[RMDB]
RNA sequence: GGGAACGACUCGAGUAGAGUCGAAAAUAAUCUAUACUGGAAUUACGCAGAGUUUAGAUUUACUACAGAUUUUAAUCAUAUUAAGCUCUUUUACAUCAGGAUGGAAGUAAGUAGGAACAAGAUCAAACCAUUACUGAUGGUUCGCCAUCAGUAAUGGAAAAGAAACAACAACAACAAC
Reactivity to DMS in 0.01 (KOAc 150mM, MgCl2 10mM, bicine 150mM(pH8.5), 24C), signal-to-noise 3, nucleotides 027 to 126: u010a060a050u010c030u000a010u000a050c000u010g020g000a180a130u000u000a100c300g000c160a110g000a040g000u020u010u000a030g000a040u000u000u020a110c070u010a130c130a100g030a120u000u010u010u010a030a090u040c010a110u030a300u000u000a040a060g010c070u000c010u010u000u000u000a090c120a050u000c100a040g010g010a080u010g000g010a060a030g010u000a020a060g000u000a040g000g010a110a060c130a020a070g000a080u000c100a070a090a150
Reactivity to 2A3 in 0.01 (KOAc 150mM, MgCl2 10mM, bicine 150mM(pH8.5), 24C), signal-to-noise 2, nucleotides 027 to 126: u060a010a010u000c000u030a010u000a060c030u030g090g100a280a080u270u080a150c070g050c090a020g050a020g130u060u010u000a010g000a000u020u050u120a050c030u060a050c040a030g080a130u060u110u100u200a040a020u070c020a010u100a050u210u120a070a020g000c000u030c000u000u120u030u080a020c040a030u120c060a030g120g020a020u110g050g020a020a070g030u060a110a010g040u040a080g030g050a080a000c050a060a010g030a040u060c060a020a060a040
Chemical mapping of a 177-nucleotide RNA with DMS and 2A3. 2A3 is a SHAPE reagent: it acylates the 2'-hydroxyl of flexible nucleotides of all four kinds. The 2A3 profile rests on 940 reads. For 2A3 the reverse transcriptase was SuperScript II with manganese. For DMS the reverse transcriptase was MarathonRT.